[RMDB]
RNA sequence: GGGAACGACUCGAGUAGAGUCGAAAAGCCGGCUAGCCGUAUACGCGUAAUAUUAAUCGGCUACGUAGCGCGCGCCGAUCGCGUAAUGCAUCGUAAUUACGUAUACGUAGCGCAUUAAUGCUACGCGCUAUGCACCCUUGUUCGCAAGGGUGCAUAGAAAAGAAACAACAACAACAAC
Reactivity to 2A3 in 0.01 (KOAc 150mM, MgCl2 10mM, bicine 150mM(pH8.5), 24C), signal-to-noise 4, nucleotides 027 to 126: g060c000c000g020g070c080u080a030g040c010c020g140u140a080u040a200c010g010c010g010u000a000a040u020a010u040u000a010a010u040c050g120g000c030u010a010c010g010u000a020g030c030g010c010g000c030g030c090c000g020a040u080c130g000c010g070u150a170a080u300g020c010a040u050c020g080u080a080a060u110u170a030c020g000u050a110u000a280c010g020u000a000g000c050g000c030a000u000u030a010a010u030g010c000u000a000c000g000c000g000
Reactivity to DMS in 0.01 (KOAc 150mM, MgCl2 10mM, bicine 150mM(pH8.5), 24C), signal-to-noise 3, nucleotides 027 to 126: g000c050c000g020g010c050u000a070g020c040c060g030u000a100u010a150c030g000c020g010u000a020a050u000a000u000u000a040a010u000c080g030g020c000u000a010c000g010u000a030g010c050g010c090g000c270g030c180c030g010a040u010c170g050c000g010u010a090a070u030g010c000a060u000c020g000u010a110a120u000u010a050c010g010u000a100u000a030c030g020u000a010g010c030g020c190a030u010u000a010a010u000g010c060u000a010c000g000c030g030
The record gives the reactivity of an RNA of 177 nucleotides to 2A3 and DMS. Reactivities are given for positions 27 through 126. For DMS, 3,936 sequencing reads were counted. DMS adducts were read by reverse transcription with MarathonRT.